[RMDB]
The record gives the reactivity of an RNA of 207 nucleotides to DMS and 2A3. The reactions ran in a buffer of 150 mM KOAc, 10 mM MgCl2 and 150 mM bicine (pH 8.5), at 24 C. It was measured as part of the RMDB library OK3TST. For 2A3, 784 sequencing reads were counted. DMS adducts were read by reverse transcription with MarathonRT.
RNA sequence: GGGAACGACUCGAGUAGAGUCGAAAAAUUGAAGAGCUGUACAAUAGUUUUUAUCUAAAGAAGACGGCUUGAUUCCGUGAUUAAUUAGACAUUUAACAACUUCCGGACGCACAUAUGCUCUCGUAUCCGACUUUGAAUACAGAUGAGAGAUGAUAUACAUUGAGGGAGUUUUCGAACUCCCUCAAUGAAAAGAAACAACAACAACAAC
Reactivity to DMS in 0.01 (KOAc 150mM, MgCl2 10mM, bicine 150mM(pH8.5), 24C), signal-to-noise 2, nucleotides 027 to 156: a180u000u000g020a140a220g020a080g060c010u000g020u000a160c050a070a080u010a190g010u010u000u010u000u010a010u000c000u000a020a020a150g010a180a240g000a060c010g010g050c140u000u000g010a210u020u010c040c020g010u000g000a090u000u000a110a130u000u010a080g000a050c040a080u000u000u000a040a020c020a020a130c110u000u010c040c060g000g000a100c060g020c070a100c010a100u010a050u000g020c000u000c010u000c020g010u000a050u000c050c030g010a140c220u000u040u000g020a020a100u000a040c030a170g000a150u000g020a080g000a100g010a060u020g010a070u020a070u000a130
Reactivity to 2A3 in 0.01 (KOAc 150mM, MgCl2 10mM, bicine 150mM(pH8.5), 24C), signal-to-noise 2, nucleotides 027 to 156: a010u070u100g060a140a060g010a000g000c020u010g070u100a030c110a160a160u050a070g030u020u140u130u260u220a050u040c000u110a130a000a000g120a080a000g040a030c020g020g000c000u030u080g050a100u150u000c050c000g010u040g000a070u020u150a070a060u030u110a030g020a070c030a040u030u120u210a110a000c070a110a000c010u100u080c070c010g050g000a010c040g070c070a020c010a110u110a040u200g040c000u010c010u010c050g000u010a070u000c010c010g070a060c080u080u110u280g020a020a000u070a110c030a060g050a150u080g020a110g000a010g010a010u090g020a030u020a000u020a110